[RMDB]
RNA sequence: GGGAACGACUCGAGUAGAGUCGAAAAGCAGUAUACUGCCACUUGUGUGAGAAUACUUUUAGUACAAGCGAGUACACGCAGUAUAGUGCCACUUGUGUGAGAAUACUUUUAGUACAAGCGAGUACACGGGCAAGCUCAGAUUCGUCUGAGCUUGCCCAAAAGAAACAACAACAACAAC
Reactivity to 2A3 in 0.01 (KOAc 150mM, MgCl2 10mM, bicine 150mM(pH8.5), 24C), signal-to-noise 1, nucleotides 027 to 126: g040c000a010g010u000a020u000a030c000u000g010c000c000a050c030u070u060g020u020g000u030g100a020g010a160a060u090a160c020u140u000u000u140a080g020u060a030c000a040a030g000c000g000a000g000u100a080c010a000c040g000c040a000g000u000a000u000a000g080u070g040c000c000a060c060u000u120g000u000g050u090g000a130g090a070a000u030a070c000u000u030u130u210a080g050u010a000c000a000a090g000c020g140a030g100u000a000c000a030c010
Description: The record gives the reactivity of an RNA of 177 nucleotides to 2A3. The RNA was probed in 150 mM KOAc, 10 mM MgCl2 and 150 mM bicine (pH 8.5) at 24 C. It was measured as part of the RMDB library OK1LIB. 2A3 is a SHAPE reagent: it acylates the 2'-hydroxyl of flexible nucleotides of all four kinds. For 2A3, 441 sequencing reads were counted.